[RMDB]
RNA sequence: GGGAACGACUCGAGUAGAGUCGAAAAAAACUAGUGUUAUUGUGGGCCGGUACUAUUACUUUGAACAAAUAAGAGUGCUUAAAGCAGGCUUCAAAUGCCUGAUUAUUAUGUGCUUGGGAUAAUGAAACUUAAAUACUAUAUUCGUAUAGUAUUUAAGAAAAGAAACAACAACAACAAC
Reactivity to 2A3 in 0.01 (KOAc 150mM, MgCl2 10mM, bicine 150mM(pH8.5), 24C), signal-to-noise 4, nucleotides 027 to 126: a000a000a000c110u100a080g040u020g010u110u040a070u040u100g080u040g100g020g000c030c020g000g050u020a020c020u020a020u110u010a030c050u080u020u110g080a100a020c030a050a030a050u140a110a030g030a000g030u010g020c010u010u050a010a010a000g030c000a000g000g000c000u100u100c110a080a070a040u120g000c000c000u010g030a010u030u020a070u030u040a030u050g070u050g010c010u010u040g040g040g060a030u070a100a060u140g050a080a020a000
Reactivity to DMS in 0.01 (KOAc 150mM, MgCl2 10mM, bicine 150mM(pH8.5), 24C), signal-to-noise 7, nucleotides 027 to 126: a040a030a090c060u000a070g020u020g010u000u010a030u010u000g010u000g000g000g000c020c020g010g000u010a020c030u010a050u010u010a060c070u000u000u010g000a120a140c140a050a040a040u010a060a070g000a040g020u000g000c040u010u000a020a030a080g010c020a020g000g010c000u000u020c300a050a080a080u030g010c000c000u010g000a040u010u020a060u010u020a040u010g000u000g010c010u010u000g010g000g000a060u020a030a050u010g010a120a080a110
Annotation:
An RNA of 177 nucleotides, treated with 2A3 and DMS and read out base by base. The data come from the RNA Mapping Database (RMDB), libraries RFM100 and RFMREP. High DMS reactivity at an A or C suggests that its Watson-Crick edge is free. For 2A3 the reverse transcriptase was SuperScript II with manganese. Reactivities are given for positions 27 through 126. Conditions: 150 mM KOAc, 10 mM MgCl2 and 150 mM bicine (pH 8.5), 24 C.